[RMDB]
RNA sequence: GGGAACGACUCGAGUAGAGUCGAAAAAAAAAGAUAUGGACGAGAACUACGAGCCUGACGUAGCGUUGAAAUUGAGUCGGAAACGACUCAAUGGAGCUACAAGGGCUCGCUCGUCCUAAGUCAAAAACAGUAUACACUAGUUCGCUAGUGUAUACUGAAAAGAAACAACAACAACAAC
Reactivity to DMS in 0.01 (KOAc 150mM, MgCl2 10mM, bicine 150mM(pH8.5), 24C), signal-to-noise 6, nucleotides 027 to 126: a060a030a060a080a070g000a020u000a300u010g000g000a020c010g010a020g000a170a040c150u020a300c020g010a020g030c010c000u000g000a300c300g000u000a000g010c000g000u010u010g000a100a100a010u010u000g000a020g010u000c000g010g010a090a070a110c000g010a010c010u000c000a000a000u000g000g000a060g000c000u000a000c020a070a300g010g000g020c010u000c010g000c010u000c010g010u000c010c000u000a010a050g000u000c010a070a070a060a070a090
Reactivity to 2A3 in 0.01 (KOAc 150mM, MgCl2 10mM, bicine 150mM(pH8.5), 24C), signal-to-noise 4, nucleotides 027 to 126: a010a000a010a000a030g050a020u100a020u130g010g000a010c030g010a000g010a180a120c210u280a080c300g000a000g010c020c020u020g030a060c290g000u000a000g000c020g150u210u040g010a020a020a010u000u010g010a000g000u000c010g000g000a040a050a030c010g010a000c000u010c000a000a000u000g000g000a010g000c000u010a000c000a010a040g010g000g010c000u000c000g000c000u000c000g000u000c000c000u000a010a000g010u000c020a050a060a000a060a080
Structure probing data (DMS and 2A3) for a 177-nucleotide construct.
Reactivities are given for positions 27 through 126.
The RNA was probed in 150 mM KOAc, 10 mM MgCl2 and 150 mM bicine (pH 8.5) at 24 C.